[RMDB]
RNA sequence: GGGAACGACUCGAGUAGAGUCGAAAAGAUAUGGAAUACCAGUGAGGCGUUUAUGUCGGAAACGACAUGACGCUCUGGUUCCUAAGUCAAAUCUGUUCAUACCAUGUUCGCAUGGUAUGAACAGAAAUCGUUCAUCUGAGUUCGCUCAGAUGAACGAAAAAGAAACAACAACAACAAC
Reactivity to 2A3 in 0.01 (KOAc 150mM, MgCl2 10mM, bicine 150mM(pH8.5), 24C), signal-to-noise 1, nucleotides 027 to 126: g040a030u140a040u140g000g050a120a000u110a300c000c020a010g070u090g300a220g240g000c060g000u030u160u240a000u020g030u000c000g000g000a080a030a030c010g000a000c000a000u030g010a000c040g070c020u000c000u000g010g010u000u000c000c000u050a190a020g040u040c030a100a040a110u000c000u010g000u000u020c010a010u000a010c010c010a000u030g040u040u120c300g000c110a030u000g020g040u010a000u000g000a010a000c000a000g000a000a000a040
Reactivity to DMS in 0.01 (KOAc 150mM, MgCl2 10mM, bicine 150mM(pH8.5), 24C), signal-to-noise 1, nucleotides 027 to 126: g000a030u000a300u000g000g000a040a040u000a060c000c000a000g000u000g030a180g030g000c000g020u000u000u000a000u000g000u000c010g000g000a070a070a150c010g000a000c000a000u000g000a000c010g050c000u000c010u000g000g000u010u000c000c000u000a070a100g000u000c050a130a070a120u000c000u000g000u000u000c000a000u000a010c000c000a000u000g020u010u030c230g020c010a000u000g010g020u000a000u010g000a000a000c000a000g020a000a040a090
Source: RMDB library TTRDEL, as collected in RNAgym. The record gives the reactivity of an RNA of 177 nucleotides to 2A3 and DMS. High 2A3 reactivity points to a flexible backbone, as in loops and unpaired stretches. Reactivities are rounded to 0.1 and cut off at 0 and 3. DMS adducts were read by reverse transcription with MarathonRT. The reactions ran in a buffer of 150 mM KOAc, 10 mM MgCl2 and 150 mM bicine (pH 8.5), at 24 C. 2A3 adducts were read by reverse transcription with SuperScript II with manganese. For DMS, 1,132 sequencing reads were counted. The 2A3 profile rests on 1,842 reads.